Notes
The data come from the RNA Mapping Database (RMDB), library RFM100. This 177-nucleotide RNA was probed chemically with DMS and 2A3. 2A3 is a SHAPE reagent: it acylates the 2'-hydroxyl of flexible nucleotides of all four kinds. Values are in units of 0.01, from 0 to 300, in steps of 10. For DMS, 1,171 sequencing reads were counted. High DMS reactivity at an A or C suggests that its Watson-Crick edge is free.
[RMDB]
RNA sequence: GGGAACGACUCGAGUAGAGUCGAAAACCUUUGUUUUAAAGGUAUACCUUCGCUUUUUAGAACAGCGAGGAUCUUAUGAGUUGAGCUUUUGUUAUUUGAGACUUUAUCUCGGGCUCCAUACAAUAUGCUUGACCUGUAUCUUCGGAUACAGGUCAAGAAAAGAAACAACAACAACAAC
Reactivity to DMS in 0.01 (KOAc 150mM, MgCl2 10mM, bicine 150mM(pH8.5), 24C), signal-to-noise 1, nucleotides 027 to 126: c000c000u000u000u000g030u020u000u000u020a000a000a090g010g000u000a050u000a130c140c050u000u000c000g000c000u020u000u000u000u120a160g000a140a100c300a030g030c020g000a000g020g140a100u000c070u010u020a140u030g000a110g040u020u040g000a050g000c030u000u010u000u020g000u000u000a180u000u070u000g000a160g000a070c150u000u010u010a000u050c020u000c000g090g000g000c020u000c000c190a100u000a020c240a040a030u010a030u000g020
Reactivity to 2A3 in 0.01 (KOAc 150mM, MgCl2 10mM, bicine 150mM(pH8.5), 24C), signal-to-noise 3, nucleotides 027 to 126: c000c000u010u000u120g220u020u160u080u120a050a030a010g030g000u020a100u020a070c030c000u050u150c040g020c000u130u070u160u110u150a090g010a240a050c010a000g020c000g000a010g000g000a020u080c020u010u090a080u170g090a110g090u130u100g100a010g030c000u040u110u090u100g150u180u130a140u180u180u190g120a100g030a010c090u090u090u040a050u230c070u040c000g000g010g010c000u030c000c000a040u250a030c010a030a050u060a040u220g120